[RMDB]
Description: Chemical mapping of a 177-nucleotide RNA with 2A3 and DMS.
RNA sequence: GGGAACGACUCGAGUAGAGUCGAAAAGAUAUGGACUGGUGGAGUCCUACCGUCGGAAACGACGGAGGACGUUGAAACCACAUGUCCUAAGUCAAAAGAGGAGAUCAUCUUCGGAUGAUCUCCUCAAGAUAUGUAAUUCGUUCGCGAAUUACAUAUCAAAAGAAACAACAACAACAAC
Reactivity to 2A3 in 0.01 (KOAc 150mM, MgCl2 10mM, bicine 150mM(pH8.5), 24C), signal-to-noise 7, nucleotides 027 to 126: g020a010u070a030u090g000g010a010c040u120g100g000u010g000g050a070g020u030c010c020u090a300c010c010g000u010c000g020g000a050a060a050c010g000a000c010g000g010a010g010g000a010c000g050u140u110g060a030a030a020c020c010a040c040a090u170g010u000c000c000u010a070a020g060u050c020a020a030a080a190g020a020g010g000a030g000a010u020c020a010u000c010u070u140c300g030g000a000u000g000a000u000c000u010c000c000u000c010a000a000
Reactivity to DMS in 0.01 (KOAc 150mM, MgCl2 10mM, bicine 150mM(pH8.5), 24C), signal-to-noise 9, nucleotides 027 to 126: g000a020u010a300u010g010g010a020c010u010g020g020u010g000g010a100g010u000c000c000u000a060c000c000g010u000c000g000g000a080a070a130c000g010a010c000g000g000a030g010g010a010c010g010u000u010g000a120a160a110c000c000a040c180a100u000g010u000c000c000u000a030a130g000u000c030a080a060a150a150g000a010g000g000a010g000a010u000c000a000u000c000u000u010c220g010g000a000u000g000a000u000c000u000c000c000u000c000a000a030
DMS adducts were read by reverse transcription with MarathonRT. 2A3 is a SHAPE reagent: it acylates the 2'-hydroxyl of flexible nucleotides of all four kinds. 2A3 adducts were read by reverse transcription with SuperScript II with manganese. The reactions ran in a buffer of 150 mM KOAc, 10 mM MgCl2 and 150 mM bicine (pH 8.5), at 24 C.